Description: Structure probing data (2A3) for a 207-nucleotide construct. Conditions: 150 mM KOAc, 10 mM MgCl2 and 150 mM bicine (pH 8.5), 24 C. Values cover nucleotides 27 to 156.
[RMDB]
RNA sequence: GGGAACGACUCGAGUAGAGUCGAAAAGUAUGACUCUUCGGAGUCAUACAAAAAAACCUUUGUGCUUCUGGUUCAUCGAUCUACCCAGACCCAUUGGGUCUGGUAGGGAGAACCUGAAGCACUCUGGUAAAAACUGUCGCGUUUCGACGCGACAGAACUUAUUGGGCAAGUUCGCUUGCCCAAUAAGAAAAGAAACAACAACAACAAC
Reactivity to 2A3 in 0.01 (KOAc 150mM, MgCl2 10mM, bicine 150mM(pH8.5), 24C), signal-to-noise 1, nucleotides 027 to 156: g020u010a000u010g010a000c010u000c000u020u100c300g080g000a010g000u000c000a000u050a010c000a000a150a000a030a000a000a000c000c000u000u010u010g000u000g000c000u010u000c040u080g000g050u040u000c020a170u290c120g090a060u010c010u010a030c030c020c040a010g020a020c000c000c080a300u150u300g020g000g000u000c000u000g000g000u010a020g030g000g000a030g000a000a000c000c000u000g010a000a010g000c000a000c000u000c000u040g000g000u070a150a060a080a050a030c010u010g010u000c010g010c010g010u020u000u160c300g050a050c020g010c000g030a000c010a000g000a000a000
For 2A3 the reverse transcriptase was SuperScript II with manganese.